[RMDB]
RNA sequence: GGGAACGACUCGAGUAGAGUCGAAAACAGAUGAUUAUGUGGAUGAUGAGGUGCCAGUUGUUUUUACUUCUAAUUGGAAACAACCGGAAUUAGAAUCAAGUGGAGAUGGCAAGACCCUACUGCUCACUCUGUUGGCAGAGUUCGCUCUGCCAACAGAAAAAGAAACAACAACAACAAC
Reactivity to 2A3 in 0.01 (KOAc 150mM, MgCl2 10mM, bicine 150mM(pH8.5), 24C), signal-to-noise 1, nucleotides 027 to 126: c080a000g060a010u000g050a050u150u160a090u150g210u140g020g050a000u060g030a000u110g110a000g000g000u080g020c000c020a020g000u010u000g090u010u040u000u040u000a120c010u210u000c000u000a080a170u060u060g100g000a170a000a000c000a000a060c000c000g030g120a000a000u000u030a100g090a100a020u130c110a150a000g000u070g100g050a120g000a010u070g030g000c060a040a000g050a090c000c000c000u050a130c000u010g090c000u000c000a030c070
Reactivity to DMS in 0.01 (KOAc 150mM, MgCl2 10mM, bicine 150mM(pH8.5), 24C), signal-to-noise 1, nucleotides 027 to 126: c100a080g010a010u030g020a100u000u000a050u000g090u000g000g030a110u000g010a010u050g010a110g010g010u000g000c010c010a000g000u000u000g000u000u010u000u000u020a000c150u010u090c080u020a090a300u060u000g000g000a030a060a070c110a070a000c000c070g000g010a120a000u000u000a000g000a210a000u000c040a030a090g000u000g000g000a040g000a060u000g030g000c070a040a050g000a140c060c010c000u000a090c040u000g020c040u000c010a150c070